[RMDB]
RNA sequence: GGGAACGACUCGAGUAGAGUCGAAAAUUGUGUGCUCGAAACUUGGAUUCAAUUACUUUUUCGUCAAAACAUACCAAAACUCUCUCACUUUUAAAAGUUCAAGUUAACGGAAGUAAGGGGAUCGAUCGUUGAUCUUGAAGUUCGCUUCAAGAUCAACAAAAGAAACAACAACAACAAC
Reactivity to DMS in 0.01 (KOAc 150mM, MgCl2 10mM, bicine 150mM(pH8.5), 24C), signal-to-noise 1, nucleotides 027 to 126: u020u010g020u000g000u010g000c070u010c040g010a140a020a050c140u000u010g020g040a040u000u000c090a090a080u000u000a000c000u000u010u000u000u020c020g010u010c070a060a050a090a020c080a060u010a100c190c090a060a020a140a110c080u000c030u010c060u000c070a050c060u010u000u000u000a010a040a080a070g000u000u000c100a070a100g000u020u010a060a040c030g010g000a020a030g010u000a000a000g000g000g030g000a020u010c070g000a080u000c050
Reactivity to 2A3 in 0.01 (KOAc 150mM, MgCl2 10mM, bicine 150mM(pH8.5), 24C), signal-to-noise 1, nucleotides 027 to 126: u000u020g020u000g010u060g080c000u000c000g040a070a060a000c060u050u110g100g020a010u090u070c030a030a130u110u010a050c010u090u040u020u000u040c030g000u000c010a000a000a170a100c000a050u210a030c030c000a000a050a090a170c000u030c010u000c010u020c010a080c050u080u080u060u050a130a190a000a030g020u060u050c080a080a040g000u070u060a040a000c020g000g010a020a000g020u000a000a000g040g000g010g000a010u030c010g040a070u040c060

Record summary: Chemical mapping of a 177-nucleotide RNA with DMS and 2A3. The reactions ran in a buffer of 150 mM KOAc, 10 mM MgCl2 and 150 mM bicine (pH 8.5), at 24 C. Values cover nucleotides 27 to 126. For DMS, 689 sequencing reads were counted.